Chemical mapping of a 177-nucleotide RNA with 2A3 and DMS.
Reactivities are rounded to 0.1 and cut off at 0 and 3.
Reactivities are given for positions 27 through 126.
The 2A3 profile rests on 1,633 reads.
For DMS the reverse transcriptase was MarathonRT.
RNA sequence: GGGAACGACUCGAGUAGAGUCGAAAACAGUGAAACAAACAAUGUUAUCGAGAUUACGAGCAAAGACCUAACUUAGCCCCCGCUGAGCACUCGACUGACAUAGUGUGCAACGGCGUAGACCUUGGACACUUAAAAUGCUCUUCGGAGCAUUUUAAGUAAAAGAAACAACAACAACAAC
Reactivity to 2A3 in 0.01 (KOAc 150mM, MgCl2 10mM, bicine 150mM(pH8.5), 24C), signal-to-noise 2, nucleotides 027 to 126: c040a020g070u040g220a110a030a040c040a040a120a030c010a010a080u050g010u050u010a060u070c040g000a020g040a180u090u230a100c070g010a000g080c020a010a020a090g000a050c000c010u050a060a130c100u170u150a100g000c010c050c010c000c000g000c010u010g020a010g010c020a020c020u030c020g120a030c040u020g030a020c000a040u070a090g020u010g000u030g020c010a000a060c040g000g000c010g010u020a020g030a060c000c020u010u010g040g020a020c000
Reactivity to DMS in 0.01 (KOAc 150mM, MgCl2 10mM, bicine 150mM(pH8.5), 24C), signal-to-noise 5, nucleotides 027 to 126: c050a080g030u010g000a110a120a080c110a100a120a070c090a080a070u000g010u000u000a100u010c040g000a050g000a120u010u010a070c080g000a070g010c040a050a070a050g010a050c060c030u000a060a080c150u000u010a060g010c010c010c020c040c070g030c030u000g010a230g020c080a040c030u000c030g000a050c130u010g000a070c120a050u000a020g010u000g010u000g000c030a060a070c150g010g010c040g030u000a090g000a090c050c030u000u000g000g010a110c120